Chemical mapping of a 177-nucleotide RNA with DMS and 2A3.
It was measured as part of the RMDB libraries RFM100 and RFMREP.
The reactions ran in a buffer of 150 mM KOAc, 10 mM MgCl2 and 150 mM bicine (pH 8.5), at 24 C.
Values are in units of 0.01, from 0 to 300, in steps of 10.
For 2A3 the reverse transcriptase was SuperScript II with manganese.
[RMDB]
RNA sequence: GGGAACGACUCGAGUAGAGUCGAAAAUGGUGGAAGUAGCAAAUAUUCAAGUGGGAUCCUUGAAGACUGAAGUGGGGAAGGGUUCCAUGGUAACAGCAGUUGGACAUGGGUUAGUCGGUCCUAAGAGCUUGUAUACCAGUUUCGACUGGUAUACAAGAAAAGAAACAACAACAACAAC
Reactivity to DMS in 0.01 (KOAc 150mM, MgCl2 10mM, bicine 150mM(pH8.5), 24C), signal-to-noise 7, nucleotides 027 to 126: u010g010g030u000g000g010a060a050g000u010a050g010c070a060a060a100u010a090u020u010c070a080a100g010u010g000g000g000a060u010c050c000u010u000g010a080a080g010a090c110u010g010a070a100g020u000g010g000g010g010a070a030g000g010g000u000u010c030c020a020u000g000g000u010a050a060c140a070g000c070a060g010u000u000g010g000a060c100a050u010g000g000g010u010u020a050g010u010c040g000g010u000c010c010u010a080a110g010a120g010
Reactivity to 2A3 in 0.01 (KOAc 150mM, MgCl2 10mM, bicine 150mM(pH8.5), 24C), signal-to-noise 9, nucleotides 027 to 126: u090g040g010u040g020g010a060a040g020u070a010g050c060a040a070a070u150a090u090u150c060a110a030g030u040g010g020g010a010u020c010c000u020u040g040a100a030g050a070c070u140g060a110a040g060u100g030g010g000g040a010a020g020g000g000u040u000c000c000a010u030g020g010u090a050a030c020a040g070c020a030g010u060u060g020g010a020c020a060u050g010g000g040u020u020a040g020u050c040g010g020u010c010c000u050a110a030g050a020g110